This 207-nucleotide RNA was probed chemically with 2A3.
The data come from the RNA Mapping Database (RMDB), library VIROID.
RNA sequence: GGGAACGACUCGAGUAGAGUCGAAAAACGAUGUUUCCCAGCCAGGGGUUUUCAUCCUCAAGUUUCUUGAUCUUCUUGUUGGAUCGCCGGAGAUCCUUCUCGAGCAGUCGCCUUUUCUUCCUUUCUUCUACCCACUGUUCGAGGAUCUCCUCCCUCUGUUUCACUAAUGGUUCGCCAUUAGUGAAACAAAAGAAACAACAACAACAAC
Reactivity to 2A3 in 0.01 (KOAc 150mM, MgCl2 10mM, bicine 150mM(pH8.5), 24C), signal-to-noise 1, nucleotides 027 to 156: a000c060g020a040u110g030u070u080u050c010c000c010a010g100c030c120a050g000g010g090g000u130u160u220u290c020a030u120c000c040u060c050a030a040g040u000u130u040c060u110u180g070a100u010c010u150u010c020u000u130g090u170u070g050g030a030u040c040g150c170c060g020g000a000g000a010u010c010c060u090u120c110u030c010g050a040g020c000a020g110u110c040g200c050c050u160u220u180u140c040u080u150c050c040u160u210u080c020u150u090c010u100a150c000c000c010a020c010u000g000u010u010c020g000a010g000g020a010u020c000u020c010c000u050c030c000c000u020c010u000